[RMDB]
RNA sequence: GGGAACGACUCGAGUAGAGUCGAAAAUUUGGAAUACGUGAUGAACACUGCUCUGAGAGUUGAUGAUAAAGCAAUUGAAUAUCUGAUUUCUCAAUUUAGAGCGAGAAAGAGCAUCUCGAUCAAGGGAAUCCUCAAUGACGUUCGCGUCAUUGAGGAUAAAAGAAACAACAACAACAAC
Reactivity to DMS in 0.01 (KOAc 150mM, MgCl2 10mM, bicine 150mM(pH8.5), 24C), signal-to-noise 2, nucleotides 027 to 126: u000u000u010g010g000a100a160u000a060c010g000u000g000a050u010g000a030a060c040a080c060u000g000c000u000c020u000g030a140g000a050g030u000u000g010a090u000g020a010u000a020a110a040g000c090a120a110u010u000g000a100a140u010a000u000c030u000g000a250u000u000u000c000u000c000a070a080u010u000u000a070g010a090g010c070g020a040g010a030a040a080g000a060g000c010a000u000c030u010c020g020a090u000c080a050a070g000g010g020a170
Reactivity to 2A3 in 0.01 (KOAc 150mM, MgCl2 10mM, bicine 150mM(pH8.5), 24C), signal-to-noise 2, nucleotides 027 to 126: u080u040u090g060g070a150a020u130a120c010g000u000g010a010u020g000a020a000c080a010c060u080g010c010u010c050u070g050a050g060a080g120u070u000g040a060u080g020a000u050a040a090a050g000c010a090a130u180u180g040a120a020u060a020u100c010u020g000a000u020u050u000c010u000c000a000a060u110u090u140a080g000a000g030c090g050a000g020a020a070a020g020a010g000c020a000u000c010u020c020g090a140u020c050a010a030g070g000g070a030

The data come from the RNA Mapping Database (RMDB), library OK2TRN. This 177-nucleotide RNA was probed chemically with DMS and 2A3. In probing experiments dimethyl sulfate is read out at A N1 and C N3, which are open when not base-paired. DMS adducts were read by reverse transcription with MarathonRT. The reactions ran in a buffer of 150 mM KOAc, 10 mM MgCl2 and 150 mM bicine (pH 8.5), at 24 C.